An RNA of 177 nucleotides, treated with DMS and 2A3 and read out base by base.
Conditions: 150 mM KOAc, 10 mM MgCl2 and 150 mM bicine (pH 8.5), 24 C.
For 2A3, 25,268 sequencing reads were counted.
RNA sequence: GGGAACGACUCGAGUAGAGUCGAAAAGACUGCGUGCACUGGAGACGAUAUCGAGCCGGAAAUUAAUCGAUAAUGUCUCGUGUAGUGGAUACGAUCCGGCAAGUAUCGACUACUUGUGCUCGUAGGAACUAUCCUACCGUUUCGACGGUAGGAUAGUAAAAGAAACAACAACAACAAC
Reactivity to DMS in 0.01 (KOAc 150mM, MgCl2 10mM, bicine 150mM(pH8.5), 24C), signal-to-noise 3, nucleotides 027 to 126: g030a180c010u000g000c000g030u000g000c010a010c000u080g010g010a040g000a010c010g010a060u010a000u030c000g010a160g000c010c010g000g010a160a140a100u030u050a110a080u010c010g000a020u000a020a100u020g000u000c010u000c000g010u000g000u030a030g020u010g010g010a000u010a030c000g000a090u010c000c000g000g010c000a170a150g010u000a000u000c000g000a030c010u000a040c020u000u000g010u000g010c000u000c000g010u000a010g000g020a110
Reactivity to 2A3 in 0.01 (KOAc 150mM, MgCl2 10mM, bicine 150mM(pH8.5), 24C), signal-to-noise 9, nucleotides 027 to 126: g080a020c000u000g000c000g010u010g000c000a010c000u030g010g010a010g000a000c020g020a020u000a000u100c010g010a010g010c000c010g020g110a080a140a050u300u250a080a150u100c010g010a010u030a080a090u150g030u000c000u000c020g030u070g030u060a050g010u040g150g000a010u010a020c010g010a030u020c000c000g000g000c030a050a010g000u000a000u000c010g060a010c000u080a070c000u020u040g000u000g000c000u000c000g000u000a000g000g000a000